[RMDB]
RNA sequence: GGGAACGACUCGAGUAGAGUCGAAAAGGCUCUAGUACGAGAGGAACGAGCCUCCGGCGCCACUGGUUUACCGGUUGUCCGGCAGGGCAUCGCCGGGCAGCUACGCGCCACGCGGUUAAAGGCUGAACCCUGUAUGAGUCUUCGGACUCAUACAGGGAAAAGAAACAACAACAACAAC
Reactivity to DMS in 0.01 (KOAc 150mM, MgCl2 10mM, bicine 150mM(pH8.5), 24C), signal-to-noise 2, nucleotides 027 to 126: g000g000c000u000c000u030a050g000u030a050c030g000a210g000a180g030g000a200a190c190g000a020g000c000c000u000c030c060g030g010c070g020c030c020a080c110u000g030g000u000u000u010a040c100c080g000g010u020u000g020u010c030c000g000g010c050a040g020g010g000c290a050u080c020g020c010c000g000g000g020c070a000g000c030u000a020c280g000c100g000c010c000a070c300g050c040g010g000u000u070a070a150a120g000g000c050u000g000a160a180
Reactivity to 2A3 in 0.01 (KOAc 150mM, MgCl2 10mM, bicine 150mM(pH8.5), 24C), signal-to-noise 3, nucleotides 027 to 126: g010g000c000u000c000u000a000g000u010a030c010g010a000g030a040g060g020a000a000c000g000a000g000c000c000u000c000c010g010g000c000g000c020c000a090c100u060g000g050u070u060u170a090c030c020g000g000u000u020g010u000c000c010g050g010c080a160g080g110g000c070a090u080c100g000c000c000g000g010g000c010a000g000c020u040a040c060g010c000g000c030c020a020c090g070c030g050g010u050u090a120a040a020g080g040c010u030g040a070a080